[RMDB]
RNA sequence: GGGAACGACUCGAGUAGAGUCGAAAAAGGCAAACGUGCCGACAAGUUGGCGUUAGCUGUAGCAUCUGAAUCGUAAUAUUCAGCAGGUUUUUGCAAUGAUUGCGCGCCAAUAAAUGCCGCAUAAUCACGCUUGCAUACGUUUCGACGUAUGCAAGCGAAAAGAAACAACAACAACAAC
Reactivity to DMS in 0.01 (KOAc 150mM, MgCl2 10mM, bicine 150mM(pH8.5), 24C), signal-to-noise 2, nucleotides 027 to 126: a050g000g000c000a050a120a140c160g020u000g010c130c000g020a080c100a040a060g010u000u000g010g020c020g020u000u010a150g020c000u000g000u000a060g010c060a120u010c000u020g000a010a010u000c050g000u000a200a150u000a050u000u000c020a020g020c300a070g010g060u000u000u000u000u000g010c040a150a170u010g010a040u030u000g000c020g000c020g000c030c000a020a080u000a030a080a110u000g000c100c010g000c090a030u010a100a010u030c140a070